The record gives the reactivity of an RNA of 170 nucleotides to 2A3 and DMS. Reactivities are rounded to 0.1 and cut off at 0 and 3. For DMS, 1,978 sequencing reads were counted. Source: RMDB library 15KLIB, as collected in RNAgym. 2A3 adducts were read by reverse transcription with SuperScript II with manganese.
RNA sequence: GGGAACGACUCGAGUAGAGUCGAAAAUGACUAAUCAUAGUUUCAGUGUGCAAAAACACAUUGGCGCUCCAGCAAACUUGCGUGUUGUUGGUCAUGCCAUGCAAGGCACUCUUUUGAAGUUGACUGUACCGGCGUGUCUUCGGACACGCCAAAAGAAACAACAACAACAAC
Reactivity to 2A3 in 0.01 (KOAc 150mM, MgCl2 10mM, bicine 150mM(pH8.5), 24C), signal-to-noise 2, nucleotides 027 to 129: u050g010a000c040u060a060a000u160c060a040u120a080g110u000u140u070c050a000g000u000g000u000g000c030a000a000a000a230a000c170a020c070a100u020u010g000g000c070g000c030u000c000c000a030g000c010a040a000a230c190u080u080g040c010g010u140g050u050u000g000u000u000g000g050u090c000a020u050g000c020c000a000u180g000c110a080a030g000g000c000a040c010u030c000u000u040u030u090g110a100a000g040u070u100g080a100c000u040g000u150a060c020c000
Reactivity to DMS in 0.01 (KOAc 150mM, MgCl2 10mM, bicine 150mM(pH8.5), 24C), signal-to-noise 2, nucleotides 027 to 129: u070g000a170c180u040a090a060u030c000a080u040a000g100u070u100u000c030a010g070u060g000u060g030c040a070a000a080a050a130c020a050c130a030u050u000g000g120c000g040c040u040c040c000a090g050c060a000a000a130c030u010u010g000c180g150u140g000u010u000g000u070u010g020g080u030c170a130u050g060c030c040a010u050g010c200a000a080g000g090c000a000c080u000c090u140u090u050u000g080a000a080g040u160u000g000a030c130u030g000u120a080c060c060